[RMDB]
RNA sequence: GGGAACGACUCGAGUAGAGUCGAAAAGAUAUGGACUGUGCUUUUGACGUGCAUUUGAGGAUCGGAAACGAUCCGAGCACGAUAAGCACUGUCCUAAGUCAAACGGUAUAAGUUCGCUUAUACCGAAGCUUGCUAUAUGCUUCGGCAUAUAGCAAGCAAAAGAAACAACAACAACAAC
Reactivity to 2A3 in 0.01 (KOAc 150mM, MgCl2 10mM, bicine 150mM(pH8.5), 24C), signal-to-noise 3, nucleotides 027 to 126: g030a030u060a050u110g020g010a000c000u020g000u000g050c010u110u150u150u240g270a210c030g010u000g010c020a160u070u150u300g230a140g030g000a000u000c020g030g000a030a080a040c000g000a010u000c000c010g010a000g000c020a000c000g030a040u030a030a000g000c000a000c000u000g010u000c000c000u000a110a000g050u040c060a060a030a100c000g010g010u010a020u010a010a000g040u020u150c300g020c170u000u000a000u000a010c000c010g000a010a010
Reactivity to DMS in 0.01 (KOAc 150mM, MgCl2 10mM, bicine 150mM(pH8.5), 24C), signal-to-noise 3, nucleotides 027 to 126: g010a030u000a300u000g000g000a030c000u000g010u000g010c000u000u010u010u010g010a220c070g030u020g020c030a300u010u000u020g030a140g010g010a000u000c000g000g000a080a100a200c010g000a010u000c000c000g010a070g010c000a000c000g020a070u000a020a010g000c000a010c000u000g010u000c000c000u000a040a100g000u000c030a110a080a300c000g010g010u020a010u000a010a000g000u000u000c260g020c000u000u000a010u010a000c000c000g000a030a050
Conditions: 150 mM KOAc, 10 mM MgCl2 and 150 mM bicine (pH 8.5), 24 C. Chemical mapping of a 177-nucleotide RNA with 2A3 and DMS. For 2A3 the reverse transcriptase was SuperScript II with manganese. For DMS the reverse transcriptase was MarathonRT. 2A3 is a SHAPE reagent: it acylates the 2'-hydroxyl of flexible nucleotides of all four kinds.